[RMDB]
RNA sequence: GGGAACGACUCGAGUAGAGUCGAAAAUUUCGGUCCGGCAUGACCAACAUGGACUGAAUCAUCGCUGGCUGACUAUUAGAGUCGAUACGGGUUGCCCUGCGCUGGCGAGGCUGGGUUUUAGGUCGGCGCACUACUGUAUUUUCGAAUACAGUAGUGCAAAAGAAACAACAACAACAAC
Reactivity to 2A3 in 0.01 (KOAc 150mM, MgCl2 10mM, bicine 150mM(pH8.5), 24C), signal-to-noise 3, nucleotides 027 to 126: u040u010u020c010g000g010u010c020c000g010g010c070a090u080g050a100c020c010a030a070c060a110u200g010g010a020c010u030g010a000a030u070c060a020u050c070g000c070u030g000g000c020u030g040a080c010u030a070u240u140a080g060a040g180u020c030g020a030u060a130c030g060g000g000u100u110g040c000c010c020u030g020c020g000c010u030g020g020c020g030a030g030g000c040u050g010g000g080u060u060u120u110a050g000g020u020c010g020g040c060
Reactivity to DMS in 0.01 (KOAc 150mM, MgCl2 10mM, bicine 150mM(pH8.5), 24C), signal-to-noise 6, nucleotides 027 to 126: u010u010u000c020g020g020u010c010c010g010g020c080a050u010g020a040c060c040a120a080c060a090u010g010g010a030c020u000g010a030a050u000c120a130u000c080g020c070u010g010g000c040u010g010a090c030u000a130u010u000a160g010a040g020u000c030g000a120u010a100c140g000g000g010u010u000g000c070c000c020u010g000c130g010c030u000g000g010c040g000a060g000g020c040u000g010g000g010u000u000u010u010a100g010g000u000c030g000g010c200